[RMDB]
Structure probing data (2A3 and DMS) for a 177-nucleotide construct.
RNA sequence: GGGAACGACUCGAGUAGAGUCGAAAAUACGGCGCUUUUAGCCCGCGAGCUGUACUGCAAUGCCGAUUAUCUUGGGCGUGUCUAUCGGCGGGUGUUUCAUCUGACGUUAACAGAAGCAAUUCAUCGCCGACUCACGAAGAUUCGUCUUCGUGAGUCGAAAAGAAACAACAACAACAAC
Reactivity to 2A3 in 0.01 (KOAc 150mM, MgCl2 10mM, bicine 150mM(pH8.5), 24C), signal-to-noise 1, nucleotides 027 to 126: u160a020c040g000g010c010g000c120u070u040u070u190a040g010c040c000c010g040c000g050a080g000c030u030g060u150a060c040u050g020c020a080a140u140g020c050c010g040a100u210u060a110u100c090u090u000g040g050g000c000g030u030g000u050c060u020a090u070c030g070g000c080g000g000g020u050g000u020u070u080c010a040u000c020u030g090a080c110g070u060u070a110a000c000a070g030a120a020g020c020a010a050u110u110c020a090u070c020g020c020
Reactivity to DMS in 0.01 (KOAc 150mM, MgCl2 10mM, bicine 150mM(pH8.5), 24C), signal-to-noise 2, nucleotides 027 to 126: u010a090c060g000g020c030g020c090u020u000u010u000a100g010c020c030c020g040c170g010a100g030c030u010g010u010a030c090u020g000c090a060a050u000g020c060c000g010a090u000u010a060u010c100u010u050g010g010g020c000g020u000g000u000c100u000a090u020c040g010g000c030g010g040g030u000g010u010u000u020c020a080u020c050u000g000a060c100g010u010u020a100a060c070a060g010a030a080g000c110a050a080u000u010c060a070u010c050g000c090

The reactions ran in a buffer of 150 mM KOAc, 10 mM MgCl2 and 150 mM bicine (pH 8.5), at 24 C. For DMS the reverse transcriptase was MarathonRT. Source: RMDB library OK2TST, as collected in RNAgym. The 2A3 profile rests on 808 reads.